Structure probing data (2A3) for a 177-nucleotide construct. Values cover nucleotides 27 to 126.
[RMDB]
RNA sequence: GGGAACGACUCGAGUAGAGUCGAAAAGUACUUUAUUGGAGUUUUAAUUGAUCACAAUAAUCGAAUAACUCUUUAUGUUGAUGGAAGUAUGAUCAAUCAGCUCACGUUAUUUGAAAACUCUAUAUGCGGACUAUGACCUGUUCGCAGGUCAUAGUCCAAAAGAAACAACAACAACAAC
Reactivity to 2A3 in 0.01 (KOAc 150mM, MgCl2 10mM, bicine 150mM(pH8.5), 24C), signal-to-noise 2, nucleotides 027 to 126: g090u180a150c070u100u120u200a070u170u120g050g000a000g000u010u000u070u100a210a040u000u100g040a080u300c130a000c030a210a030u300a170a080u040c020g000a020a000u030a030a000c000u010c000u010u020u080a270u100g060u000u020g020a090u020g060g040a110a300g150u280a040u300g110a120u190c000a000a050u000c000a040g000c000u000c040a060c030g000u000u000a050u080u000u100g040a030a000a030a000c000u050c050u030a030u030a090u250g090c060
For 2A3, 509 sequencing reads were counted.